Chemical mapping of a 177-nucleotide RNA with 2A3 and DMS. The reactions ran in a buffer of 150 mM KOAc, 10 mM MgCl2 and 150 mM bicine (pH 8.5), at 24 C. The 2A3 profile rests on 5,933 reads.
[RMDB]
RNA sequence: GGGAACGACUCGAGUAGAGUCGAAAAGUGUGGUGCGGGCCACUGAGAUCAACGGCAACGGGUCGCGCAUCCAGACCUGGACCGGCAGCUAUGAUGCGGCCGCAACCCAGUCCGGUGGUGUGUGUGGCAGGUCUUAGAAAUUCGUUUCUAAGACCUGAAAAGAAACAACAACAACAAC
Reactivity to 2A3 in 0.01 (KOAc 150mM, MgCl2 10mM, bicine 150mM(pH8.5), 24C), signal-to-noise 4, nucleotides 027 to 126: g070u060g050u080g040g010u040g010c040g000g050g000c040c010a110c150u080g040a060g000a120u110c070a080a070c050g140g000c040a050a040c060g040g010g020u030c040g010c010g000c190a020u030c010c000a020g030a050c010c020u010g000g010a020c010c000g000g000c010a000g000c010u080a110u300g130a100u220g090c000g020g020c000c010g000c010a040a070c000c000c010a000g010u030c010c010g020g030u060g040g000u030g010u010g010u020g010u050g030g020
Reactivity to DMS in 0.01 (KOAc 150mM, MgCl2 10mM, bicine 150mM(pH8.5), 24C), signal-to-noise 7, nucleotides 027 to 126: g020u010g010u000g000g020u000g020c040g020g010g000c020c010a060c060u000g000a240g000a070u010c140a060a130c150g000g000c070a080a150c130g000g010g010u000c010g000c040g030c040a030u000c020c040a120g000a050c120c030u000g000g020a060c110c020g010g010c010a030g010c020u000a130u010g010a110u000g010c010g000g020c000c010g010c100a090a080c070c010c010a080g010u000c010c040g010g020u010g010g000u000g010u010g000u000g010u000g000g010